[RMDB]
An RNA of 207 nucleotides, treated with DMS and 2A3 and read out base by base. For 2A3, 6,138 sequencing reads were counted. It was measured as part of the RMDB library OK3TST.

RNA sequence: GGGAACGACUCGAGUAGAGUCGAAAACACGAGAAUCACUUGAACCUGGGAGGCAGAAGUUGCAGUGAGCUGAGAUCGCACCACUGCACUCCAGCCUGUGCAAAAGGGCCAGACAUCAUCUCAGAAUAGGUGAAUGAAUGAAUGAGUAAUCACAUGCAGAUACUAUGGUUUUCGAACCAUAGUAUCUAAAAGAAACAACAACAACAAC
Reactivity to DMS in 0.01 (KOAc 150mM, MgCl2 10mM, bicine 150mM(pH8.5), 24C), signal-to-noise 3, nucleotides 027 to 156: c050a130c080g010a110g010a110a160u000c060a020c050u000u000g000a060a080c030c030u000g010g000g010a090g050g030c030a060g000a050a110g040u000u000g030c020a040g020u010g010a090g020c010u010g030a300g000a030u000c070g060c040a050c020c020a060c040u000g020c020a020c020u000c010c010a170g000c000c010u000g010u020g020c110a040a040a080a080g020g010g000c020c030a090g020a140c030a070u000c010a040u000c020u010c040a060g010a060a100u000a110g010g020u020g010a090a070u000g000a100a110u010g000a030a100u000g000a140g000u010a070a060u010c030a040c040a070u010g010c130
Reactivity to 2A3 in 0.01 (KOAc 150mM, MgCl2 10mM, bicine 150mM(pH8.5), 24C), signal-to-noise 7, nucleotides 027 to 156: c090a020c040g090a060g070a100a050u100c030a030c090u080u080g050a080a060c010c010u020g010g010g000a020g020g000c030a020g020a140a010g080u170u040g000c000a000g000u010g010a020g010c040u030g050a030g020a130u210c110g010c040a040c100c000a010c030u010g000c000a000c000u000c000c000a010g000c000c010u060g040u110g010c040a050a020a050a060g020g030g000c020c000a030g070a110c010a050u060c010a040u000c030u020c060a070g080a140a090u140a120g030g030u020g030a050a060u050g060a040a040u060g030a050a030u110g030a030g100u150a070a070u130c080a030c010a110u200g090c050